[RMDB]
RNA sequence: GGGAACGACUCGAGUAGAGUCGAAAAGGCUGUUGCCAUGAUAUAUAUGGAUGAGACAGAAGUGGCCCCGUUGACGAGUUUAACUUAGAUUAAGUAGGACGCAUGAUCUUGAGCUCUUUUCCUAUACGUUAUUGCAUAUCUUCGGAUAUGCAAUAACAAAAGAAACAACAACAACAAC
Reactivity to 2A3 in 0.01 (KOAc 150mM, MgCl2 10mM, bicine 150mM(pH8.5), 24C), signal-to-noise 2, nucleotides 027 to 126: g060g000c000u010g000u160u090g050c010c010a000u060g100a020u090a050u090a020u030a010u220g020g020a050u060g120a040g050a040c020a000g060a070a020g100u060g070g000c030c030c000c000g080u050u050g050a050c060g020a010g070u060u040u060a070a030c000u010u090a010g080a240u110u100a080a060g020u000a040g090g000a010c040g000c030a040u080g020a060u020c010u030u030g040a010g020c020u040c000u020u010u020u030c040c000u080a110u020a130c040
Reactivity to DMS in 0.01 (KOAc 150mM, MgCl2 10mM, bicine 150mM(pH8.5), 24C), signal-to-noise 5, nucleotides 027 to 126: g010g000c030u000g020u000u000g020c010c000a040u010g010a150u010a080u010a110u000a050u010g000g010a130u000g030a170g000a050c040a030g020a130a100g010u000g010g010c040c020c020c060g010u000u000g000a110c070g000a110g000u000u000u010a060a060c050u010u000a070g000a150u000u010a030a080g010u000a110g000g010a080c080g040c040a070u000g000a060u000c030u000u010g010a080g000c070u000c030u000u010u000u000c010c010u000a090u000a100c220
About this RNA:
An RNA of 177 nucleotides, treated with 2A3 and DMS and read out base by base. The reactions ran in a buffer of 150 mM KOAc, 10 mM MgCl2 and 150 mM bicine (pH 8.5), at 24 C. 2A3 adducts were read by reverse transcription with SuperScript II with manganese.